Structure probing data (2A3) for a 207-nucleotide construct. The reactions ran in a buffer of 150 mM KOAc, 10 mM MgCl2 and 150 mM bicine (pH 8.5), at 24 C.
RNA sequence: GGGAACGACUCGAGUAGAGUCGAAAACAUGGUGGCAAGUACGCCGCGAUAUUGCGCCACCUGCAAUAGAAGCGUAGACAUCAACUGUAGCGAGAGCUACUCAACUUAUGGACCUUAGAGCAUGCGAAGACGACUGGUCCUGUCGGAAUUCGCUAGACCACGGCACGGCGUUCGCGCCGUGCCGUGGAAAAGAAACAACAACAACAAC
Reactivity to 2A3 in 0.01 (KOAc 150mM, MgCl2 10mM, bicine 150mM(pH8.5), 24C), signal-to-noise 1, nucleotides 027 to 156: c070a050u060g000g000u020g010g020c050a070a070g070u030a000c020g000c020c000g080c090g020a040u070a110u240u140g000c060g000c000c000a000c000c000u110g010c000a000a080u020a210g090a020a000g000c000g040u000a050g040a070c070a070u120c070a080a190c070u130g010u020a030g020c030g000a130g000a000g050c030u000a000c020u000c020a000a170c000u070u070a010u150g070g030a000c010c050u020u110a090g000a000g120c060a070u100g020c000g000a040a000g070a090c000g000a040c040u050g000g030u050c020c000u000g000u010c000g000g060a050a180u080u000c000g000c000u030a070g060a060